Description: Chemical mapping of a 177-nucleotide RNA with DMS. Conditions: 150 mM KOAc, 10 mM MgCl2 and 150 mM bicine (pH 8.5), 24 C. Source: RMDB library RFMREP, as collected in RNAgym. The DMS profile rests on 2,752 reads.

RNA sequence: GGGAACGACUCGAGUAGAGUCGAAAAUAGAUCAGUGCUUGGCACCUAGUAAGCACUCAGUAUAUACUUGUUGAGUGCCUGCUAUGUGCCAGGCAUUGUGCUGAAAAGCCUGUCGUUCGCGACAGGCGUCACAUAACGGCUUCGGCCGUUAUGUGACAAAAGAAACAACAACAACAAC
Reactivity to DMS in 0.01 (KOAc 150mM, MgCl2 10mM, bicine 150mM(pH8.5), 24C), signal-to-noise 2, nucleotides 027 to 126: u010a050g000a110u000c000a020g020u000g010c010u000u000g010g010c000a010c000c030u000a010g010u000a010a050g020c000a000c010u000c010a020g000u000a040u000a170u030a100c280u000u010g020u000u000g000a010g020u000g010c000c020u000g010c000u000a000u000g000u000g010c010c000a010g000g010c000a000u010u010g010u000g010c050u000g000a100a100a080a210g000c000c000u000g000u000c000g010u010u010c270g000c000g010a010c010a010g000g010c000